[RMDB]
RNA sequence: GGGAACGACUCGAGUAGAGUCGAAAAGAGGGUCGCCCAGGAAUGGCGGGACCCCACUCGACUGGGGUCCGCGUUCCAUCCUUUCUUACCUGAUGGCCGGCAUGGUCCCAGCCUCCUCGCUGGCGCCGAGAUUAAGUGAGUUCGCUCACUUAAUCUCAAAAGAAACAACAACAACAAC
Reactivity to 2A3 in 0.01 (KOAc 150mM, MgCl2 10mM, bicine 150mM(pH8.5), 24C), signal-to-noise 3, nucleotides 027 to 126: g060a020g020g010g000u100c080g040c010c000c020a000g100g060a060a050u180g300g300c080g030g050g050a050c010c010c000c010a030c020u200c040g260a230c100u010g000g010g010g000u010c000c000g020c000g000u030u000c000c000a030u040c000c000u060u240u030c020u070u050a050c020c030u080g060a130u140g100g030c050c010g050g000c050a050u130g050g020u060c020c000c000a010g020c000c020u030c010c000u010c050g020c020u020g020g020c000g040c050c060
Reactivity to DMS in 0.01 (KOAc 150mM, MgCl2 10mM, bicine 150mM(pH8.5), 24C), signal-to-noise 3, nucleotides 027 to 126: g010a060g000g000g020u000c120g000c050c030c090a150g000g010a040a010u010g020g020c020g020g000g010a020c010c010c000c000a010c040u000c250g000a100c180u000g010g000g010g000u000c000c010g020c020g020u000u010c000c010a080u000c020c010u000u000u010c030u010u000a150c090c040u000g010a090u020g010g010c030c030g000g000c060a080u010g010g000u000c080c020c020a080g010c050c020u000c050c050u000c070g010c000u010g010g010c070g020c140c100